[RMDB]
Chemical mapping of a 177-nucleotide RNA with 2A3 and DMS. The reactions ran in a buffer of 150 mM KOAc, 10 mM MgCl2 and 150 mM bicine (pH 8.5), at 24 C. For 2A3, 5,689 sequencing reads were counted. For DMS, 4,780 sequencing reads were counted.
RNA sequence: GGGAACGACUCGAGUAGAGUCGAAAAUUGAAUCCUUUCAAGAUCACAUCACCAAAAGUGUUAGCGAAUUGGUCAAUAUGGGCAUCACCCACAUGAAAGAAAUUUAUGAUUUGAUAUAUUCGGAGACGAUGUAAUGACAGUUCGCUGUCAUUACAUCAAAAGAAACAACAACAACAAC
Reactivity to 2A3 in 0.01 (KOAc 150mM, MgCl2 10mM, bicine 150mM(pH8.5), 24C), signal-to-noise 5, nucleotides 027 to 126: u070u060g030a020a040u070c020c000u070u140u090c090a080a040g030a060u070c020a010c010a080u040c020a040c030c000a070a030a050a040g060u060g050u100u060a050g040c020g060a050a080u040u050g080g000u000c010a000a050u070a080u170g010g000g010c040a040u060c030a040c000c010c000a040c010a020u090g070a040a040a090g060a020a140a030u120u160u060a090u120g040a050u020u040u060g000a000u030a030u020a020u170u060c030g040g030a090g020a080c120
Reactivity to DMS in 0.01 (KOAc 150mM, MgCl2 10mM, bicine 150mM(pH8.5), 24C), signal-to-noise 5, nucleotides 027 to 126: u000u010g010a120a100u010c020c030u000u000u010c100a090a130g010a060u000c050a040c080a110u010c060a080c040c040a070a100a100a160g010u000g010u000u010a070g020c060g000a060a090u000u010g030g010u010c030a090a090u010a080u010g010g000g010c080a120u010c140a120c020c020c010a110c090a060u000g000a020a040a110g000a070a090a060u000u020u000a050u020g000a110u000u000u010g010a050u000a080u000a070u010u000c010g000g010a120g020a120c160